This 177-nucleotide RNA was probed chemically with 2A3 and DMS. The RNA was probed in 150 mM KOAc, 10 mM MgCl2 and 150 mM bicine (pH 8.5) at 24 C. It was measured as part of the RMDB library OK2TRN.
[RMDB]
RNA sequence: GGGAACGACUCGAGUAGAGUCGAAAAGGAGUGCUACCGAAAGGUAGCACUCCAACAAAUCGGUGUAAGAGCAGCCCUACUUACACCGUGCGGCACAGCGGAAACGCUGAUGUCGUAUACUGGGCUAGUGGUCCUAAUAUUUCGAUAUUAGGACCACAAAAGAAACAACAACAACAAC
Reactivity to 2A3 in 0.01 (KOAc 150mM, MgCl2 10mM, bicine 150mM(pH8.5), 24C), signal-to-noise 1, nucleotides 027 to 126: g000g000a000g020u000g000c010u010a010c010c000g080a110a080a090g000g000u020a020g000c000a000c000u010c010c000a000a000c010a000a000a010u060c000g000g000u000g000u000a010a000g010a030g090c060a010g000c000c000c010u050a100c010u010u010a010c010a000c000c000g000u030g000c010g000g020c000a000c000a010g010c020g000g040a080a060a010c010g010c010u000g010a030u000g010u000c000g000u000a000u000a010c050u050g000g000g000c000u010a060
Reactivity to DMS in 0.01 (KOAc 150mM, MgCl2 10mM, bicine 150mM(pH8.5), 24C), signal-to-noise 2, nucleotides 027 to 126: g000g000a010g000u010g030c000u000a000c000c000g020a160a130a180g010g040u000a000g000c000a000c000u010c010c030a030a050c090a040a030a070u000c000g010g020u000g010u000a000a000g010a070g000c070a040g000c000c000c000u000a050c000u000u000a000c000a030c000c000g000u000g010c000g010g010c000a010c000a000g010c000g000g000a190a050a220c000g050c000u000g000a050u010g020u000c000g010u000a060u010a050c290u000g030g000g010c000u000a120